[RMDB]
Conditions: 150 mM KOAc, 10 mM MgCl2 and 150 mM bicine (pH 8.5), 24 C. Chemical mapping of a 207-nucleotide RNA with DMS and 2A3.
RNA sequence: GGGAACGACUCGAGUAGAGUCGAAAAGCGUACUACACAGGGGUAGAUACAGGGAGCUCUGCUAACGCUUAUCCCAAAUAGGAUAAGCGGACCCAGAGCGAAGAACUGUAUCCGAAUACUGUGUAUCGCAAAAGGGAAGCUCUUCGGAGCUUCCCAAGAUAUGUUCUCUCUUCGGAGAGAACAUAUCAAAAGAAACAACAACAACAAC
Reactivity to DMS in 0.01 (KOAc 150mM, MgCl2 10mM, bicine 150mM(pH8.5), 24C), signal-to-noise 1, nucleotides 027 to 156: g000c000g010u000a070c030u000a000c010a020c000a020g010g000g060g000u000a070g000a060u000a020c010a040g000g000g020a300g020c000u000c030u000g030c010u000a050a300c010g020c000u000u000a030u000c000c010c000a030a130a170u020a040g020g010a050u000a020a000g010c000g000g010a070c300c300c020a040g030a060g020c000g000a080a110g010a030a120c000u000g020u010a030u000c000c020g000a020a040u000a060c010u010g040u000g000u000a000u000c000g000c000a030a120a160a190g040g090g000a060a010g000c010u000c000u010u000c290g050g000a060g020c010u000u000c000c000c010a010a020
Reactivity to 2A3 in 0.01 (KOAc 150mM, MgCl2 10mM, bicine 150mM(pH8.5), 24C), signal-to-noise 1, nucleotides 027 to 156: g020c020g020u130a040c040u020a000c030a000c000a020g050g000g010g080u130a030g000a000u000a020c010a000g000g000g050a000g010c000u000c000u000g060c020u020a030a000c000g000c000u000u000a000u030c010c000c040a160a210a150u280a090g000g000a000u000a000a000g000c000g000g000a000c000c000c010a010g000a000g000c020g000a010a000g010a010a010c000u030g000u000a000u000c010c000g110a060a050u050a130c000u000g000u040g010u000a030u200c000g000c010a000a090a040a130g020g000g000a010a010g000c000u000c000u040u070c300g160g000a000g000c000u000u000c000c000c000a000a000